[RMDB]
RNA sequence: GGGAACGACUCGAGUAGAGUCGAAAAACUGACAGACUGUUAGUUGUAGGACAUCCUUAUUUUGAUGUUAUGGAUGUUACCGAUGAGUCUAAAGUAGCAAUUCCAAAGGUUUCUGCCAAUCAGUACAAUUUAUAGGACGAUUCGUCGUCCUAUAAAUAAAAGAAACAACAACAACAAC
Reactivity to DMS in 0.01 (KOAc 150mM, MgCl2 10mM, bicine 150mM(pH8.5), 24C), signal-to-noise 9, nucleotides 027 to 126: a040c010u000g000a160c220a040g000a050c050u000g010u010u000a110g020u000u000g010u010a130g010g010a070c010a010u000c000c020u000u000a050u000u010u010u010g010a130u020g010u000u000a050u000g000g010a010u000g010u000u000a070c050c030g010a060u010g000a050g010u000c010u000a070a170a070g010u000a050g010c110a080a140u000u000c030c030a080a080a120g010g010u000u000u000c040u000g010c090c100a060a090u010c080a070g000u000a070c150a080
Reactivity to 2A3 in 0.01 (KOAc 150mM, MgCl2 10mM, bicine 150mM(pH8.5), 24C), signal-to-noise 5, nucleotides 027 to 126: a000c000u010g020a010c020a060g040a040c010u050g060u200u050a090g060u100u130g080u120a070g080g010a010c010a000u000c010c000u070u050a130u050u190u110u230g260a200u250g050u220u060a040u080g010g000a010u000g010u030u040a070c000c010g020a080u090g050a000g000u000c010u020a040a020a020g010u020a020g030c040a030a100u050u040c000c000a060a030a010g090g000u010u100u030c030u030g050c030c030a070a100u100c010a040g060u060a050c030a030